[RMDB]
RNA sequence: GGGAACGACUCGAGUAGAGUCGAAAAUUGCUCGUGCGUACGAUCCGUUUUCUUUGAGUCGCGUUGUUUGGGAAUGCAGCGCAAAGUAGGUGGUAAAUUCCAUCUAAAGCUAAAUAUUGGUGCGAGAUUGGGAGUUAAUUUUCGAAUUAACUCCCAAAAAAGAAACAACAACAACAAC
Reactivity to DMS in 0.01 (KOAc 150mM, MgCl2 10mM, bicine 150mM(pH8.5), 24C), signal-to-noise 5, nucleotides 027 to 126: u030u020g010c050u000c010g020u000g010c060g020u020a080c080g000a070u000c050c050g010u000u000u010u000c030u010u020u010g010a070g000u020c090g010c050g010u010u000g000u000u010u000g020g010g020a080a090u010g010c050a060g000c050g010c040a030a050a070g010u000a010g010g020u000g010g000u000a070a080a170u040u030c020c000a000u000c000u000a020a080a100g000c080u010a070a060a070u020a110u010u010g000g020u010g000c010g000a050g000a200
Reactivity to 2A3 in 0.01 (KOAc 150mM, MgCl2 10mM, bicine 150mM(pH8.5), 24C), signal-to-noise 4, nucleotides 027 to 126: u110u090g020c010u010c000g010u040g020c010g020u100a060c020g010a070u030c070c040g040u020u050u000u050c060u080u110u080g100a090g030u080c050g010c000g020u010u000g030u010u000u070g100g040g020a040a040u030g010c000a010g000c020g000c020a010a020a030g100u050a010g000g010u020g030g030u050a140a150a020u230u030c000c000a000u000c010u060a060a000a030g000c000u050a030a070a050u300a150u160u180g130g000u060g010c000g000a030g020a060
An RNA of 177 nucleotides, treated with DMS and 2A3 and read out base by base. It was measured as part of the RMDB libraries RFM100 and RFMREP.